[RMDB]
RNA sequence: GGGAACGACUCGAGUAGAGUCGAAAAAGGAUUGGUCGGGCGCGAUCGUCCGGCAGAUUCUCACGGAGUUCGGGACCACCCUGGCCUGGGCUCACCUCGAAACCAACGAGGCGAGCCUGAAGAACUACUUCGGCGACGACAACGUGACGGUUCAGGCAUGAUGAUGUCUGUUCGCAGACAUCAUCAUAAAAGAAACAACAACAACAAC
Reactivity to 2A3 in 0.01 (KOAc 150mM, MgCl2 10mM, bicine 150mM(pH8.5), 24C), signal-to-noise 1, nucleotides 027 to 156: a040g100g010a060u150u220g050g000u020c000g000g000g020c120g030c090g170a130u300c050g030u000c000c000g000g000c020a000g000a000u050u000c020u000c020a000c120g090g030a050g030u200u110c000g010g050g020a070c010c000a030c050c020c000u020g060g000c020c020u020g000g010g000c000u000c020a020c010c000u000c020g020a140a080a100c100c000a060a100c030g000a000g040g000c000g000a000g000c020c000u000g030a000a020g010a080a060c070u250a100c050u160u050c040g000g000c030g030a040c040g030a020c080a100a060c060g010u090g020a050c100g000g000u110u220c040a000g020g010c030